Record summary: Conditions: 150 mM KOAc, 10 mM MgCl2 and 150 mM bicine (pH 8.5), 24 C. An RNA of 177 nucleotides, treated with 2A3 and DMS and read out base by base. It was measured as part of the RMDB library OK1LIB. Reactivities are given for positions 27 through 126. The DMS profile rests on 1,121 reads.
RNA sequence: GGGAACGACUCGAGUAGAGUCGAAAACGAACUCCAAUAGCGCCUUCUGCAAGUCCGAACCCUGCGGCGACACGCCGGUGGUCUGCACGUACUUGCGGCCACGGAAGUCAGCGAAGUACACGAAGUACAGGCUAUCUGUGUUCGCACAGAUAGCCUGAAAAGAAACAACAACAACAAC
Reactivity to 2A3 in 0.01 (KOAc 150mM, MgCl2 10mM, bicine 150mM(pH8.5), 24C), signal-to-noise 2, nucleotides 027 to 126: c020g030a010a010c020u050c020c020a070a030u110a150g000c010g020c010c000u060u090c020u120g040c010a000a170g010u000c020c000g000a030a040c030c000c000u000g040c000g030g000c000g060a030c030a030c120g000c000c040g120g020u030g080g000u000c170u240g090c050a060c000g050u000a070c070u020u040g010c000g000g000c000c000a010c000g010g050a050a000g030u050c060a030g010c050g100a030a010g000u070a050c020a000c100g070a090a020g040u060a020
Reactivity to DMS in 0.01 (KOAc 150mM, MgCl2 10mM, bicine 150mM(pH8.5), 24C), signal-to-noise 1, nucleotides 027 to 126: c020g000a030a000c130u020c060c160a030a180u000a140g010c100g020c110c000u070u000c000u000g070c020a040a190g000u000c000c000g000a000a130c000c110c070u020g000c010g110g010c000g000a060c060a030c190g020c000c000g000g000u000g000g050u000c000u240g080c000a040c160g010u040a060c140u090u000g000c030g000g080c000c000a000c040g010g000a130a090g000u040c040a070g030c000g010a090a160g000u000a020c030a170c050g020a030a060g000u000a090